[RMDB]
RNA sequence: GGGAACGACUCGAGUAGAGUCGAAAAACGCGGAGGUUACGACCUCCGCGAACCUGCUGUCCUUCAUUCCACCGGAGUCUGUCUCAUACAUAAUCAGAUUUCAGUGGAGUGAAGCACAAGAGGCAAACAUAAUCUUUCAAUUCGUUGAAAGAUUAUGAAAAGAAACAACAACAACAAC
Reactivity to 2A3 in 0.01 (KOAc 150mM, MgCl2 10mM, bicine 150mM(pH8.5), 24C), signal-to-noise 9, nucleotides 027 to 126: a000c010g000c000g010g000a010g020g030u070u070a100c260g060a020c060c000u000c000c000g000c000g000a000a000c000c000u070g060c020u020g010u030c010c000u000u000c000a000u000u000c000c000a000c000c010g010g000a000g010u000c000u010g060u010c030u040c180a220u290a280c050a080u260a120a090u160c000a000g000a000u010u020u000c000a000g000u000g000g000a000g000u000g000a000a000g000c010a000c000a020a070g020a020g050g000c040a070a040a010
Reactivity to DMS in 0.01 (KOAc 150mM, MgCl2 10mM, bicine 150mM(pH8.5), 24C), signal-to-noise 9, nucleotides 027 to 126: a100c010g030c010g010g000a020g000g020u000u010a090c190g020a080c010c000u000c000c000g010c010g000a010a030c010c010u000g010c050u000g000u000c240c000u000u000c000a010u000u000c000c000a000c000c050g010g000a010g000u000c000u000g000u010c190u010c250a150u050a120c270a120u030a140a100u020c020a010g000a010u000u000u000c010a030g020u000g010g000a010g010u000g000a000a000g010c240a010c020a040a060g000a120g000g010c110a100a100a170
Chemical mapping of a 177-nucleotide RNA with 2A3 and DMS. The data come from the RNA Mapping Database (RMDB), libraries RFM100 and RFMREP. DMS adducts were read by reverse transcription with MarathonRT. Reactivities are given for positions 27 through 126. For 2A3 the reverse transcriptase was SuperScript II with manganese.